[RMDB]
This 207-nucleotide RNA was probed chemically with 2A3.
Source: RMDB library M2RFOK, as collected in RNAgym.
RNA sequence: GGGAACGACUCGAGUAGAGUCGAAAAUCAGAAUCAGGCCGGAGUGUUUAGCGCUCCGUAAACACGGUCGUACAUCCAGCCGGUAGCCUGGUUCCUUGCGUUGAGUGAUGUACGGAGUUUAUAGAGCAAAAGAAAGACCUGUUCGCAGGUCUUUCAAGUACAGCAUCACGUUCGCGUGAUGCUGUACAAAAGAAACAACAACAACAAC
Reactivity to 2A3 in 0.01 (KOAc 150mM, MgCl2 10mM, bicine 150mM(pH8.5), 24C), signal-to-noise 1, nucleotides 027 to 156: u050c030a000g000a000a000u000c000a000g000g000c010c020g000g010a000g000u080g000u100u270u190a070g060c020g010c000u010c000c000g020u050a010a010a000c140a050c110g000g120u130c000g030u070a010c010a060u000c000c000a000g000c020c000g020g000u020a000g000c000c000u000g010g020u000u000c010c010u120u180g140c040g190u020u200g040a050g080u120g000a000u030g000u060a020c000g000g040a130g000u050u140u010a250u130a000g240a050g030c080a040a070a100a100g000a000a000a000g000a000c000c000u000g000u050u100c260g000c000a000g000g000u000c020u020u000u000c000a010a000
The reactions ran in a buffer of 150 mM KOAc, 10 mM MgCl2 and 150 mM bicine (pH 8.5), at 24 C.